Conditions: 150 mM KOAc, 10 mM MgCl2 and 150 mM bicine (pH 8.5), 24 C. This 177-nucleotide RNA was probed chemically with 2A3 and DMS. DMS adducts were read by reverse transcription with MarathonRT. DMS (dimethyl sulfate) methylates the pairing face of unpaired adenines and cytosines. The DMS profile rests on 3,810 reads.

RNA sequence: GGGAACGACUCGAGUAGAGUCGAAAAGAUAUGGAGCGUCGCAACCGUUCGACGAUCUACUUGUUCCUUUUCCUCGGAAACGAGGAAAAGGAACAAGUAGGGAGAACGUUGCGAGCGCUCCUAAGUCGAUGGAUAUAGGGUUCGCCCUAUAUCCAUCAAAAGAAACAACAACAACAAC
Reactivity to 2A3 in 0.01 (KOAc 150mM, MgCl2 10mM, bicine 150mM(pH8.5), 24C), signal-to-noise 2, nucleotides 027 to 126: g090a020u170a080u300g010g000a030g000c020g020u050c010g010c040a030a070c300c140g030u020u010c050g120a300c000g020a120u000c010u010a010c000u010u010g010u000u010c020c000u000u030u010u000c000c000u000c000g040g060a140a110a080c020g010a020g000g000a010a010a000a000g020g000a000a000c000a000a000g000u000a000g020g000g000a010g000a010a010c010g000u000u010g030c000g020a000g020c000g000c000u000c000c000u010a040a010g080u050c090
Reactivity to DMS in 0.01 (KOAc 150mM, MgCl2 10mM, bicine 150mM(pH8.5), 24C), signal-to-noise 2, nucleotides 027 to 126: g000a080u010a300u000g000g010a010g020c000g030u010c000g000c000a000a010c160c210g040u000u000c010g010a080c300g000a030u000c000u000a000c000u000u000g000u000u000c000c000u020u000u000u000c000c000u000c000g000g000a100a080a240c000g020a010g010g000a000a000a000a000g010g010a000a000c000a010a010g010u000a000g000g000g010a030g000a010a010c020g020u000u000g000c000g010a050g000c000g030c000u000c000c010u000a000a070g000u000c130